[RMDB]
This 207-nucleotide RNA was probed chemically with DMS and 2A3. The 2A3 profile rests on 15,025 reads. The reactions ran in a buffer of 150 mM KOAc, 10 mM MgCl2 and 150 mM bicine (pH 8.5), at 24 C. It was measured as part of the RMDB library OK3TST. Values cover nucleotides 27 to 156. For 2A3 the reverse transcriptase was SuperScript II with manganese.

RNA sequence: GGGAACGACUCGAGUAGAGUCGAAAACAACUAUGGUGUGUCAUGAUCGUGGCCGACUACGUAGUGUAUCAGCAUGUGCGUUAGUCGACCACAUAGUUAACCGCGUGGUACGCACCGUGUGAUCAACUAGUGCUGGCACAUGCUGACCAUGCGCGCGGCUAAGUGAAAAAUUCGUUUUUCACUUAGCAAAAGAAACAACAACAACAAC
Reactivity to DMS in 0.01 (KOAc 150mM, MgCl2 10mM, bicine 150mM(pH8.5), 24C), signal-to-noise 4, nucleotides 027 to 156: c040a110a130c070u000a070u010g000g020u000g030u010g010u010c030a110u000g000a140u000c120g040u000g010g030c030c000g020a080c010u000a010c010g020u000a300g040u000g010u000a130u020c220a170g010c020a020u010g020u000g020c020g010u000u000a030g030u000c020g020a020c000c010a010c010a020u000a020g020u000u000a060a090c070c040g020c050g020u000g020g010u000a070c130g000c040a060c010c030g040u000g020u000g000a090u010c040a020a030c020u010a120g010u000g020c050u000g000g050c030a030c020a080u000g000c020u000g000a030c000c000a040u010g010c000g010c020g010c080g020
Reactivity to 2A3 in 0.01 (KOAc 150mM, MgCl2 10mM, bicine 150mM(pH8.5), 24C), signal-to-noise 9, nucleotides 027 to 156: c050a020a040c040u120a080u170g020g010u030g010u020g040u090c040a060u090g100a170u150c110g010u000g010g000c010c010g020a020c010u010a000c010g020u030a020g080u070g070u200a130u140c030a040g050c010a010u060g050u060g120c020g030u060u100a010g000u010c010g000a010c000c010a000c000a000u010a000g040u040u150a060a060c040c020g030c040g020u040g020g070u080a040c030g000c020a020c020c030g010u020g010u020g030a130u150c070a040a080c040u130a070g060u030g100c020u060g060g000c000a000c000a030u040g010c000u020g010a020c000c010a030u130g010c020g000c010g000c020g050